[RMDB]
RNA sequence: GGGAACGACUCGAGUAGAGUCGAAAAGUAAAGAAGAAAACGUGCGCAAGAAAAGAAUGGUGGUAUAAACUGCGGAGAAUAACUAAUGGACGGCAGAGCGCACGAACCACCAAAGAACAGAAAAAAAACUGAGUUUAAGAUUCGUCUUAAACUCAGUAAAAGAAACAACAACAACAAC
Reactivity to 2A3 in 0.01 (KOAc 150mM, MgCl2 10mM, bicine 150mM(pH8.5), 24C), signal-to-noise 1, nucleotides 027 to 126: g110u160a090a150a080g060a060a010g020a030a130a020a000c030g000u030g020c010g000c040a040a070g050a240a230a000a000g020a050a000u050g000g020u000g030g030u030a050u050a020a040a000c000u010g010c010g030g100a060g040a140a120u110a080a040c070u140a220a000u160g080g020a040c010g050g020c000a000g020a010g040c000g000c000a000c000g000a000a020c000c000a000c020c000a020a040a050g100a080a020c080a020g080a070a050a000a000a000a000a000
Reactivity to DMS in 0.01 (KOAc 150mM, MgCl2 10mM, bicine 150mM(pH8.5), 24C), signal-to-noise 2, nucleotides 027 to 126: g000u010a080a090a110g020a090a180g000a140a090a120a160c010g020u010g000c000g060c020a150a170g020a030a050a030a040g000a090a140u000g030g020u000g000g000u000a060u010a070a030a020c010u000g010c020g000g030a200g010a070a090u020a040a110c130u030a050a070u010g000g000a090c080g010g000c010a000g010a070g000c000g010c000a010c000g000a040a030c010c010a010c030c040a030a080a120g020a000a100c170a090g040a010a000a050a060a030a110a030
Source information: The record gives the reactivity of an RNA of 177 nucleotides to 2A3 and DMS. DMS adducts were read by reverse transcription with MarathonRT. Reactivities are given for positions 27 through 126.